The data come from the RNA Mapping Database (RMDB), library RFMREP. An RNA of 177 nucleotides, treated with DMS and read out base by base.
RNA sequence: GGGAACGACUCGAGUAGAGUCGAAAAUAGGGCUAGUGGAAGACUUAAGAUGGCGGCGUUUGCACGGAGUGCAAUCACUGCGUCCUUACGGGGGUUGCAAGGCGUCCGAAGUAUGAGUCCACUAACAGAUGGCUAUUUUGUUCGCAAAAUAGCCAUCAAAAGAAACAACAACAACAAC
Reactivity to DMS in 0.01 (KOAc 150mM, MgCl2 10mM, bicine 150mM(pH8.5), 24C), signal-to-noise 1, nucleotides 027 to 126: u020a060g010g040g020c080u000a030g010u010g010g010a040a160g010a170c030u010u000a070a190g000a010u000g040g040c030g100g030c050g000u000u030u000g000c010a030c060g040g070a150g040u000g000c030a010a010u000c020a010c000u000g000c000g000u000c030c010u000u000a140c020g030g020g000g010g010u000u000g010c300a050a110g010g000c000g010u000c040c010g000a080a040g000u020a060u010g000a110g030u000c000c000a030c010u010a020a020c110a190

Conditions: 150 mM KOAc, 10 mM MgCl2 and 150 mM bicine (pH 8.5), 24 C. Values cover nucleotides 27 to 126.